RNA sequence: GGGAACGACUCGAGUAGAGUCGAAAACAUCCACUGCUACGGCAGUGGAUGAACGAGGUAGGUACGCCUACCUCGAAAGGUGGAUGUGGUCAUAUACAUUAAACGUCCAUGGUACGCCAUGGACGAACCUGCGCAUUACUUUCGAGUAAUGCGCAGGAAAAGAAACAACAACAACAAC
Reactivity to 2A3 in 0.01 (KOAc 150mM, MgCl2 10mM, bicine 150mM(pH8.5), 24C), signal-to-noise 1, nucleotides 027 to 126: c000a010u000c000c000a000c000u010g040c000u000a070c120g140g030c000a010g000u000g000g000a000u000g000a000a020c000g000a000g000g000u000a000g020g000u030a030c270g080c000c000u010a000c000c000u010c000g010a040a000a000g140g050u140g080g040a020u040g020u050g050g080u040c010a010u140a000u020a190c080a040u060u190a090a150a030c020g020u000c030c000a000u010g000g000u020a020c240g050c060c010a000u010g000g000a000c000g000a000a000
Reactivity to DMS in 0.01 (KOAc 150mM, MgCl2 10mM, bicine 150mM(pH8.5), 24C), signal-to-noise 1, nucleotides 027 to 126: c010a020u000c000c000a000c000u010g000c020u000a120c160g010g000c000a010g000u000g000g000a010u040g010a050a170c080g000a010g000g050u000a000g000g020u000a050c300g050c010c000u000a000c000c000u010c000g030a030a050a030g030g000u000g000g000a040u000g000u000g000g030u000c070a070u030a150u030a060c090a070u000u040a070a100a140c030g030u000c000c000a000u000g000g030u000a060c300g030c010c010a050u000g000g010a010c010g010a000a020